Chemical mapping of a 177-nucleotide RNA with DMS and 2A3. It was measured as part of the RMDB library M2PK50. DMS adducts were read by reverse transcription with MarathonRT. The 2A3 profile rests on 36,253 reads. The RNA was probed in 150 mM KOAc, 10 mM MgCl2 and 150 mM bicine (pH 8.5) at 24 C.

RNA sequence: GGGAACGACUCGAGUAGAGUCGAAAAGCAAGAUGCUUCGGCAUCUUGCAGUCGUAGCGCGAUCGACAGAAUUACACCUAUGUCGAACGAGGAAGAGCGCGCACAUCAUCCCUUUCGAGGGAUGAAACAUUAGUUUACCAUUCGUGGUAAACUAAUGAAAAGAAACAACAACAACAAC
Reactivity to DMS in 0.01 (KOAc 150mM, MgCl2 10mM, bicine 150mM(pH8.5), 24C), signal-to-noise 9, nucleotides 027 to 126: g010c000a010a000g010a010u000g010c000u000u010c210g040g010c000a000u000c000u000u000g010c000a040g010u010c040g020u000a060g020c010g010c010g010a110u000c010g010a020c000a020g000a110a120u000u010a110c260a110c150c070u000a110u000g010u000c010g000a030a090c080g000a110g010g010a070a060g000a120g000c000g000c010g020c010a100c210a140u000c000a010u000c000c000c000u000u000u010c140g010a020g010g000g000a000u000g000a020a080a180
Reactivity to 2A3 in 0.01 (KOAc 150mM, MgCl2 10mM, bicine 150mM(pH8.5), 24C), signal-to-noise 9, nucleotides 027 to 126: g000c000a010a000g000a000u010g000c010u060u120c220g090g000c010a010u000c000u000u000g000c000a000g040u020c030g020u040a030g000c010g000c000g030a040u030c010g010a000c000a020g090a070a030u240u180a110c090a070c050c050u100a100u090g020u010c010g010a040a060c040g020a110g120g110a080a050g040a020g080c010g000c000g010c010a020c010a060u030c000a000u000c000c000c000u020u020u060c230g090a020g000g010g000a000u000g000a010a010a000